[RMDB]
RNA sequence: GGGAACGACUCGAGUAGAGUCGAAAAAGUGUCCUACACAACGAGGGACGCUGACGCGAAAGCGUGGUCUAGCGAACCAAUUAGGCUGCUUGAUGCGGCCAAUUGCUGACAGAAAAGCUACCUUAGGUAAAGUAUACUGCUUCGGCAGUAUACUUUAAAAAGAAACAACAACAACAAC
Reactivity to DMS in 0.01 (KOAc 150mM, MgCl2 10mM, bicine 150mM(pH8.5), 24C), signal-to-noise 8, nucleotides 027 to 126: a030g010u010g010u000c000c010u010a150c190a140c220a110a100c170g000a220g010g000g000a080c090g000c000u000g000a050c030g010c010g000a130a070a120g020c010g030u000g020g000u000c020u020a050g010c050g000a100a090c210c060a020a030u000u010a090g010g010c010u000g010c000u000u030g000a130u050g000c000g000g000c000c010a010a000u000u000g000c050u000g000a070c080a130g010a090a070a080a070g000c000u000a130c040c010u000u000a070g000g020
Reactivity to 2A3 in 0.01 (KOAc 150mM, MgCl2 10mM, bicine 150mM(pH8.5), 24C), signal-to-noise 7, nucleotides 027 to 126: a010g080u070g040u020c010c010u110a060c130a010c020a100a180c100g080a120g010g010g000a000c040g000c010u020g020a010c010g020c010g040a160a010a030g030c010g020u060g000g020u040c070u080a010g010c010g040a030a030c010c000a010a010u020u010a080g010g010c000u000g000c010u070u180g150a100u300g050c010g000g000c000c000a000a000u010u010g010c020u040g060a040c020a050g190a040a110a000a010g000c000u010a030c010c000u050u090a070g100g020
Chemical mapping of a 177-nucleotide RNA with DMS and 2A3. DMS adducts were read by reverse transcription with MarathonRT. Values cover nucleotides 27 to 126. DMS (dimethyl sulfate) methylates the pairing face of unpaired adenines and cytosines. High 2A3 reactivity points to a flexible backbone, as in loops and unpaired stretches. For 2A3 the reverse transcriptase was SuperScript II with manganese. The reactions ran in a buffer of 150 mM KOAc, 10 mM MgCl2 and 150 mM bicine (pH 8.5), at 24 C. The data come from the RNA Mapping Database (RMDB), libraries RFM100 and RFMREP.